[RMDB]
The record gives the reactivity of an RNA of 207 nucleotides to DMS and 2A3. Source: RMDB library M2RFPK, as collected in RNAgym. DMS adducts were read by reverse transcription with MarathonRT.
RNA sequence: GGGAACGACUCGAGUAGAGUCGAAAAACUGAUACCUUACGAGGUAUCAGAAUGACUUCGUGGUAGAGCGCCACGAACGGAAAAUAAAGAAAGCUCGAUUGAAACGCACCGUGUACGCACGGAGCGAAAAAGUCGAUCCAGUUCGCUGGAUCGACAACUUAUAGUGUUGGUUCGCCAACACUAUAAGAAAAGAAACAACAACAACAAC
Reactivity to DMS in 0.01 (KOAc 150mM, MgCl2 10mM, bicine 150mM(pH8.5), 24C), signal-to-noise 2, nucleotides 027 to 156: a110c020u000g000a020u010a010c000c000u010u000a050c220g030a090g070g000u000a010u000c000a010g020a110a120u000g020a110c090u000u000c010g010u010g020g030u010a050g010a040g060c010g000c010c000a000c020g010a000a020c090g010g000a100a080a050a050u000a070a070a110g010a050a040a120g020c000u000c010g000a240u030u000g000a090a070a140c010g000c020a040c000c010g020u000g010u020a080c300g030c010a010c000g000g010a030g010c000g000a000a020a060a130a090g010u000c010g000a010u000c000c000a020g020u000u010c300g030c000u000g020g010a010u010c000g020a000c010a000a030
Reactivity to 2A3 in 0.01 (KOAc 150mM, MgCl2 10mM, bicine 150mM(pH8.5), 24C), signal-to-noise 4, nucleotides 027 to 156: a010c010u000g000a000u010a000c000c010u060u040a050c220g120a020g010g000u000a000u000c000a010g000a010a040u130g060a060c030u000u010c000g000u010g000g010u020a150g020a000g010c000g000c010c000a000c000g000a000a000c030g070g040a040a020a020a030u060a010a020a030g140a030a040a010g000c010u010c020g140a170u090u260g060a120a090a010c010g000c000a010c010c000g000u010g010u030a010c110g000c060a000c000g000g000a010g000c000g010a090a050a020a010a000g010u010c000g010a000u000c010c000a010g010u040u060c150g070c100u000g000g000a000u000c000g000a000c000a000a010